[RMDB]
RNA sequence: GGGAACGACUCGAGUAGAGUCGAAAACUUGCUAUACUCACUCCCCCUUGUCUACACAUGUAUGAGGCAUGUGGUUCAUUAGAGCAGGCACUCAUGCAGGGGGCAGAAACCACUCUAGCAACUUUAAGCAGAAAGGGUGCCAUACAGGGCACACACACACGGAUUAUGACUUCGGUCAUAAUCCGUGAAAAGAAACAACAACAACAAC
Reactivity to 2A3 in 0.01 (KOAc 150mM, MgCl2 10mM, bicine 150mM(pH8.5), 24C), signal-to-noise 1, nucleotides 027 to 156: c000u000u060g010c000u070a040u020a100c000u030c080a110c090u070c000c000c000c000c000u090u030g030u040c030u140a040c030a010c010a030u060g000u040a100u110g130a040g030g010c010a010u110g020u040g080g030u010u060c040a040u050u160a070g000a010g070c060a000g000g000c020a000c110u060c010a000u130g000c000a030g040g020g000g000g000c000a000g090a180a040a020c090c000a040c030u120c050u020a000g030c030a030a020c050u140u110u140a080a000g070c050a000g080a080a010a060g040g000g000u010g010c000c000a040u120a100c060a010g030g000g040c010a040c020a000c000a000c000a000
Chemical mapping of a 207-nucleotide RNA with 2A3. For 2A3 the reverse transcriptase was SuperScript II with manganese. It was measured as part of the RMDB library OK3TST. Conditions: 150 mM KOAc, 10 mM MgCl2 and 150 mM bicine (pH 8.5), 24 C.